RNA sequence: GGGAACGACUCGAGUAGAGUCGAAAAACAAACAAACAAAAGAACAAAAGAGUCGUGCAAAUGACUGGCUCGACAGAUGCACGACAAAUCGAGCCAUGAAAAGACAGCGGGAAAACCGCUGUCGAAACGACAUGUUGGACUUCGGUCCAGCAUGUCGAAAAGAAACAACAACAACAAC
Reactivity to DMS in 0.01 (KOAc 150mM, MgCl2 10mM, bicine 150mM(pH8.5), 24C), signal-to-noise 3, nucleotides 027 to 126: a070c060a060a070a150c250a070a130a180c130a040a080a110a150g010a090a110c140a040a050a040a110g000a130g010u010c000g000u010g020c000a010a060a110u020g000a150c120u010g010g000c000u020c010g010a050c100a050g000a140u000g000c020a000c020g000a010c020a020a080a100u010c040g010a000g000c000c060a090u030g020a060a030a120a130g010a000c000a000g000c020g000g000g010a030a070a090a070c020c000g010c000u010g010u000c000g020a000a030a130
Reactivity to 2A3 in 0.01 (KOAc 150mM, MgCl2 10mM, bicine 150mM(pH8.5), 24C), signal-to-noise 5, nucleotides 027 to 126: a000c050a040a060a000c100a040a120a030c090a030a160a040a040g220a110a050c080a060a090a030a010g080a060g010u010c000g000u000g000c000a010a030a150u130g060a070c040u020g010g000c000u010c020g010a010c000a000g060a020u090g000c020a010c030g040a000c010a010a020a010u010c010g000a010g000c010c000a060u140g070a050a040a010a000g000a000c000a000g000c000g000g040g030a010a110a030a110c000c000g000c000u000g000u010c000g000a000a000a000
The record gives the reactivity of an RNA of 177 nucleotides to DMS and 2A3. The reactions ran in a buffer of 150 mM KOAc, 10 mM MgCl2 and 150 mM bicine (pH 8.5), at 24 C.